[RMDB]
RNA sequence: GGGAACGACUCGAGUAGAGUCGAAAAAAGAUAUGGAGCCUAGACAUGUCGGAUAACAUCAACAGCAGAGCUCGGAAACGAGCUCUGACAUGAUGCUAAUACGACAACAGCUAGGCUCCUAAGUCAACAUCUGUGUCCUGUUCGCAGGACACAGAUGAAAAGAAACAACAACAACAAC
Reactivity to DMS in 0.01 (KOAc 150mM, MgCl2 10mM, bicine 150mM(pH8.5), 24C), signal-to-noise 1, nucleotides 027 to 126: a080a120g010a050u000a300u000g020g010a050g000c000c000u020a010g020a080c070a150u000g000u000c000g030g010a030u000a020a080c000a020u020c000a030a150c300a170g000c000a010g000a020g000c000u000c010g010g000a060a160a150c000g000a020g000c000u000c000u000g000a010c070a110u000g000a020u020g000c010u000a100a090u000a160c000g000a000c010a030a140c300a160g000c000u000a000g000g010c000u000c000c000u040a010a040g000u000c020a130a190
Structure probing data (DMS) for a 177-nucleotide construct. Reactivities are given for positions 27 through 126. For DMS the reverse transcriptase was MarathonRT. It was measured as part of the RMDB library TTRDES. The reactions ran in a buffer of 150 mM KOAc, 10 mM MgCl2 and 150 mM bicine (pH 8.5), at 24 C.